Description:
Structure probing data (DMS and 2A3) for a 177-nucleotide construct. For 2A3, 3,525 sequencing reads were counted. DMS adducts were read by reverse transcription with MarathonRT. The RNA was probed in 150 mM KOAc, 10 mM MgCl2 and 150 mM bicine (pH 8.5) at 24 C.
[RMDB]
RNA sequence: GGGAACGACUCGAGUAGAGUCGAAAAAACUGAAACAUCUAAGUACCCGGAGGAGAAGAAAUCAACUGCGAGAUUCCCCGAGUAGCGGCGAGCGAAAGGGGACCGAUGGCCAAACCGGCGAGCGGGCACUAGAGACAUUUUUCGAAAUGUCUCUAGUAAAAGAAACAACAACAACAAC
Reactivity to DMS in 0.01 (KOAc 150mM, MgCl2 10mM, bicine 150mM(pH8.5), 24C), signal-to-noise 5, nucleotides 027 to 126: a090a070c040u030g000a180a050a140c090a070u010c060u010a110a080g010u000a110c020c000c000g000g010a060g000g010a120g000a050a060g000a080a110a060u030c070a060a080c080u000g010c050g000a110g010a130u030u010c000c000c000c000g010a050g020u000a070g000c000g000g040c220g010a280g000c010g000a060a090a130g000g000g000g010a010c170c030g000a060u010g020g000c020c040a020a110a050c160c080g000g010c030g010a050g020c060g000g000g010c080
Reactivity to 2A3 in 0.01 (KOAc 150mM, MgCl2 10mM, bicine 150mM(pH8.5), 24C), signal-to-noise 5, nucleotides 027 to 126: a000a000c060u080g050a150a080a000c030a070u050c030u080a050a050g040u040a110c000c010c020g000g030a040g020g020a040g010a130a040g020a040a180a040u090c030a050a090c060u080g050c070g010a070g040a180u070u070c000c000c010c010g000a000g000u000a000g000c030g110g050c240g040a040g010c000g000a020a000a000g010g000g010g000a000c000c000g010a010u040g060g020c010c000a090a110a030c060c010g020g000c000g020a020g030c040g000g020g010c000